[RMDB]
RNA sequence: GGGAACGACUCGAGUAGAGUCGAAAAGAUCGCGGAUGGCACGAUGAAUAGCGCGCGUGACGUCCUCAAACACCACGUACUGAACGGAAUACCCUGUUUUCGCGUAGAAGCGCCGCGCAAGUUCAGGAAUCCCAUUAGGUUUCGACCUAAUGGGAUUAAAAGAAACAACAACAACAAC
Reactivity to DMS in 0.01 (KOAc 150mM, MgCl2 10mM, bicine 150mM(pH8.5), 24C), signal-to-noise 6, nucleotides 027 to 126: g010a090u020c090g040c170g010g000a040u000g000g010c010a050c020g000a080u020g020a100a080u020a100g010c070g010c040g010c010g000u030g000a080c090g000u010c010c010u000c070a080a050a070c150a140c050c030a080c110g000u020a080c030u010g010a040a040c050g020g010a070a070u000a060c040c020c010u020g000u010u010u010u010c040g010c040g000u010a100g010a110a120g000c040g000c050c030g020c020g000c060a060a090g000u000u000c030a050g000g010
Reactivity to 2A3 in 0.01 (KOAc 150mM, MgCl2 10mM, bicine 150mM(pH8.5), 24C), signal-to-noise 7, nucleotides 027 to 126: g100a030u150c050g010c060g050g010a030u030g080g040c010a010c050g060a050u160g070a080a150u100a120g040c040g010c000g000c010g050u010g010a020c010g040u030c000c000u050c050a080a100a010c070a050c030c020a070c040g020u080a070c020u040g020a050a010c020g020g050a040a030u140a170c010c000c000u020g090u030u070u060u130c030g000c020g000u060a040g020a110a020g010c020g010c040c010g010c000g000c040a030a030g030u020u020c010a010g060g000